The data come from the RNA Mapping Database (RMDB), library TTRDES. Structure probing data (2A3 and DMS) for a 177-nucleotide construct. The reactions ran in a buffer of 150 mM KOAc, 10 mM MgCl2 and 150 mM bicine (pH 8.5), at 24 C. For 2A3 the reverse transcriptase was SuperScript II with manganese.
RNA sequence: GGGAACGACUCGAGUAGAGUCGAAAAGAUAUGGAUCUGGUCCCUGCGAUAAGUCCCGGUCGGAAACGACCGUGGACUUUUGACGCAGAAACAGAUCCUAAGUCAAAUCGCUACUUCGGUAGCGAAACCCUAUUAAAUUCUUCGGAAUUUAAUAGGGAAAAGAAACAACAACAACAAC
Reactivity to 2A3 in 0.01 (KOAc 150mM, MgCl2 10mM, bicine 150mM(pH8.5), 24C), signal-to-noise 3, nucleotides 027 to 126: g020a010u070a040u150g000g000a000u010c000u020g000g130u230c120c080c000u000g020c040g100a100u030a230a010g010u000c000c000c000g000g000u010c000g000g030a150a070a090c010g000a000c020c010g010u050g000g000a000c000u020u000u010u040g020a010c010g000c000a000g040a020a100a000c000a000g000a000u010c000c000u010a080a000g030u010c030a010a040a300u060c000g010c000u010a010c010u050u080c260g190g010u000a000g010c000g000a020a000a000
Reactivity to DMS in 0.01 (KOAc 150mM, MgCl2 10mM, bicine 150mM(pH8.5), 24C), signal-to-noise 5, nucleotides 027 to 126: g000a040u010a300u010g010g010a010u000c000u000g020g000u000c220c160c040u000g020c010g020a190u010a010a010g010u000c000c010c000g020g000u010c010g010g000a140a090a230c010g010a010c000c000g030u020g010g000a000c000u000u000u010u010g020a180c110g010c000a010g000a090a060a150c000a000g000a010u000c000c000u000a010a090g010u000c030a090a140a140u000c000g000c000u000a000c010u000u010c220g030g020u000a000g010c000g000a000a070a120